[RMDB]
RNA sequence: GGGAACGACUCGAGUAGAGUCGAAAACACAGGCGACUUAAUCGGAGAGCGGUUACACGCGAGGAAGAUGAAAUUAUUACAUCUGUAGACUCGAGAUUACUACAACUUGCGUUGCUAUCUCAAAUAACUUCUCCAAAAGGUUCGCCUUUUGGAGAAGAAAAGAAACAACAACAACAAC
Reactivity to 2A3 in 0.01 (KOAc 150mM, MgCl2 10mM, bicine 150mM(pH8.5), 24C), signal-to-noise 1, nucleotides 027 to 126: c040a000c010a040g070g070c050g050a010c090u070u080a040a040u050c020g010g000a020g020a030g040c080g030g030u060u100a040c050a010c030g020c010g010a010g030g030a050a090g020a010u040g040a090a110a040u280u160a080u130u150a070c010a000u050c020u040g040u040a050g030a040c070u050c020g000a040g010a140u100u160a030c010u000a000c010a050a010c000u000u060g000c000g040u060u030g000c000u050a030u100c030u000c010a080a110a030u060a030a060
Reactivity to DMS in 0.01 (KOAc 150mM, MgCl2 10mM, bicine 150mM(pH8.5), 24C), signal-to-noise 2, nucleotides 027 to 126: c070a070c180a070g000g000c040g030a060c120u000u030a080a080u030c040g020g000a070g000a090g020c050g000g000u000u000a060c100a050c020g000c020g010a040g000g000a140a090g030a010u000g000a060a110a080u000u010a070u010u000a120c020a010u010c010u000g010u010a090g000a070c070u000c060g000a150g030a120u000u010a050c100u000a030c050a050a050c030u000u000g010c070g010u000u000g050c120u000a070u000c000u000c010a060a050a080u010a050a120